[RMDB]
RNA sequence: GGGAACGACUCGAGUAGAGUCGAAAAGUAAACAAGGUAGCAUUUUUAUUUGGCUCAGCACUUAUUGCUGAAGGUAAUUACGCCGUUAUGGGUAUGGUCGCAGUUGCUGUAUGUACACCACCAAUCGAUAUCAAACACAAUUCGUUGUGUUUGAUAUAAAAGAAACAACAACAACAAC
Reactivity to 2A3 in 0.01 (KOAc 150mM, MgCl2 10mM, bicine 150mM(pH8.5), 24C), signal-to-noise 8, nucleotides 027 to 126: g050u060a050a060a070c050a080a030g060g010u030a010g030c030a080u010u020u000u080u120a160u070u130u160g050g000c010u010c010a000g010c000a020c070u200u200a120u230u220g000c010u020g010a060a040g030g010u030a050a070u080u050a030c060g020c030c010g030u070u080a070u160g070g000g000u040a050u100g020g030u050c040g000c070a020g020u090u070g020c020u020g020u060a080u070g030u010a010c020a030c040c010a020c020c010a020a040u110c050g040
Reactivity to DMS in 0.01 (KOAc 150mM, MgCl2 10mM, bicine 150mM(pH8.5), 24C), signal-to-noise 9, nucleotides 027 to 126: g010u010a060a080a100c110a080a100g010g010u000a060g010c030a030u000u000u010u010u000a060u030u010u000g010g010c090u000c020a020g010c020a050c300u000u010a100u010u000g010c010u000g010a050a060g010g010u010a040a040u000u010a080c110g020c020c030g010u000u000a070u000g010g000g020u000a040u000g010g010u000c060g010c060a050g010u000u000g020c020u000g010u000a050u010g010u000a070c090a080c050c040a080c070c060a070a070u010c150g010